[RMDB]
RNA sequence: GGGAACGACUCGAGUAGAGUCGAAAAUUUAAGGAUUCGCGCUAGCUCGCCAUGGCUAUAGGUAUUCAGCACAUCAGCUGCAGUGAUCCCGAUCGUGUUAUCCAUGCGCAUGUCUAGUGGCGCAUCAAAUGUGUUAUAGGUUCGCCUAUAACACAUUAAAAGAAACAACAACAACAAC
Reactivity to DMS in 0.01 (KOAc 150mM, MgCl2 10mM, bicine 150mM(pH8.5), 24C), signal-to-noise 9, nucleotides 027 to 126: u010u010u010a110a140g010g000a040u000u000c020g020c020g010c040u000a020g000c020u000c070g010c030c020a020u000g010g010c120u000a040u000a080g010g010u000a070u000u000c080a120g010c020a070c100a160u010c200a090g010c080u000g010c080a070g010u000g000a070u000c070c010c020g010a090u000c160g010u000g010u000u000a060u000c020c020a020u000g000c140g010c010a080u000g000u020c030u000a030g010u000g030g030c000g010c070a020u000c050a080
Reactivity to 2A3 in 0.01 (KOAc 150mM, MgCl2 10mM, bicine 150mM(pH8.5), 24C), signal-to-noise 7, nucleotides 027 to 126: u070u070u040a120a040g150g000a010u030u030c010g000c010g000c020u010a000g000c010u020c080g000c010c000a000u010g010g000c030u050a020u090a160g040g010u030a070u060u090c030a020g020c010a020c010a160u180c070a040g020c070u030g000c020a070g060u030g120a040u060c000c010c020g020a070u120c110g020u070g060u230u070a040u030c010c000a000u020g030c040g000c070a020u050g060u030c010u020a020g030u040g270g010c000g000c000a000u010c010a000
Source information:
This 177-nucleotide RNA was probed chemically with DMS and 2A3. 2A3 adducts were read by reverse transcription with SuperScript II with manganese. The 2A3 profile rests on 17,872 reads. For DMS, 40,348 sequencing reads were counted. Values cover nucleotides 27 to 126. DMS adducts were read by reverse transcription with MarathonRT. Conditions: 150 mM KOAc, 10 mM MgCl2 and 150 mM bicine (pH 8.5), 24 C.